Chemical mapping of a 177-nucleotide RNA with 2A3 and DMS.

RNA sequence: GGGAACGACUCGAGUAGAGUCGAAAAGCUGAGAGCUGCAUUGAAACAGGCACCACCAGCCUAAAGUACUGGAGAGUGAUGCACUGCCUAGGUGCAAUAGGUUCUUUAAACUUAAGUGACAGUUCAAGUUGCUCCAAAAAUUCGUUUUUGGAGCAACAAAAGAAACAACAACAACAAC
Reactivity to 2A3 in 0.01 (KOAc 150mM, MgCl2 10mM, bicine 150mM(pH8.5), 24C), signal-to-noise 2, nucleotides 027 to 126: g110c060u080g050a030g000a010g130c040u030g000c000a020u020u080g040a070a000a040c050a020g000g020c000a020c010c000a020c010c010a040g010c000c000u140a200a100a040g080u060a100c110u050g040g030a060g000a020g080u090g050a080u070g000c030a040c180u010g000c020c050u040a030g000g000u020g070c020a010a040u080a070g070g000u010u000c000u060u120u110a100a180a060c020u020u090a040a070g020u030g060a080c030a050g000u000u010c020a050a020
Reactivity to DMS in 0.01 (KOAc 150mM, MgCl2 10mM, bicine 150mM(pH8.5), 24C), signal-to-noise 2, nucleotides 027 to 126: g020c100u000g000a110g000a070g040c020u000g000c070a050u000u010g000a110a140a130c150a030g000g030c000a030c010c010a170c070c000a040g020c060c030u000a040a080a150g000u010a040c050u000g000g000a120g000a120g040u000g010a080u000g000c000a110c010u000g000c070c060u000a190g010g020u000g000c010a090a100u000a080g010g030u000u020c060u010u010u010a060a080a060c050u000u010a040a080g010u010g000a090c100a040g010u000u000c070a130a110

The reactions ran in a buffer of 150 mM KOAc, 10 mM MgCl2 and 150 mM bicine (pH 8.5), at 24 C. For 2A3, 1,704 sequencing reads were counted. The DMS profile rests on 1,410 reads. Values cover nucleotides 27 to 126.